[RMDB]
RNA sequence: GGGAACGACUCGAGUAGAGUCGAAAAGAUAUGGAGGCUGAUGACCCACACCGACCGUAUACUACCCACCAAAGCUCGGAAACGAGCUUUGAGGUAUACCAGUACGUGUGGCAAGGCCUCCUAAGUCCUCCCCAUCCAAGUUCGCUUGGAUGGGGAGAAAAGAAACAACAACAACAAC
Reactivity to DMS in 0.01 (KOAc 150mM, MgCl2 10mM, bicine 150mM(pH8.5), 24C), signal-to-noise 1, nucleotides 027 to 126: g010a030u000a300u000g010g040a000g020g000c000u000g020a050u040g010a080c300c000c000a000c000a000c000c000g020a220c300c300g000u080a000u000a000c000u000a050c010c050c080a300c060c000a000a000a000g020c000u000c000g000g000a020a040a200c020g060a000g000c000u000u000u000g000a010g050g000u000a060u000a000c000c000a100g020u000a080c300g010u080g010u000g000g020c060a000a060g000g010c100c000u010c000c000u000a000a060g010u000c070